[RMDB]
RNA sequence: GGGAACGACUCGAGUAGAGUCGAAAAGUUUCUGCUUCGGCAGAAACAAAAGCGUACUACUGGUGGUGUUGGGAGGCUGUUCUCCCAAAUAGGAGAGACAGCCGAGGAUCAACACGUAACAUCCAGUAUCGCAAACCUUCCGUCUUCGGACGGAAGGCAGAUGUGUAAUCUUCGGAUUACACAUCUGAAAAGAAACAACAACAACAAC
Reactivity to DMS in 0.01 (KOAc 150mM, MgCl2 10mM, bicine 150mM(pH8.5), 24C), signal-to-noise 2, nucleotides 027 to 156: g020u000u000u000c000u010g010c010u010u000c300g050g000c000a010g000a010a020a000c030a030a030a070a110g010c040g030u000a100c130u010a050c010u010g010g030u000g020g030u000g020u000u010g000g010g010a140g020g030c000u010g040u010u000c010u010c000c000c000a010a080a120u030a120g000g010a040g000a120g000a030c000a010g020c010c010g000a060g020g030a100u000c000a060a020c000a010c010g030u010a040a030c040a160u000c000c010a030g000u000a010u000c020g020c040a010a120a120c010c000u000u000c000c000g020u000c000u000u000c300g040g020a010c000g000g010a010a000g020g020
Reactivity to 2A3 in 0.01 (KOAc 150mM, MgCl2 10mM, bicine 150mM(pH8.5), 24C), signal-to-noise 2, nucleotides 027 to 156: g000u000u000u000c000u000g030c010u010u030c100g150g000c000a000g000a000a000a000c000a000a080a000a000g000c020g020u080a070c050u000a010c000u020g000g000u000g040g000u000g000u000u000g020g010g000a000g000g000c000u000g030u100u010c010u030c020c020c050a070a260a130u210a050g000g010a070g000a000g010a020c010a000g000c000c000g000a040g000g000a000u000c000a000a000c000a000c010g030u020a030a020c020a130u070c010c000a000g000u000a030u080c000g000c000a050a030a140c000c000u000u020c000c000g000u000c000u020u050c190g090g010a000c000g000g000a010a000g000g000
An RNA of 207 nucleotides, treated with DMS and 2A3 and read out base by base.
For 2A3, 4,197 sequencing reads were counted.
Conditions: 150 mM KOAc, 10 mM MgCl2 and 150 mM bicine (pH 8.5), 24 C.
2A3 adducts were read by reverse transcription with SuperScript II with manganese.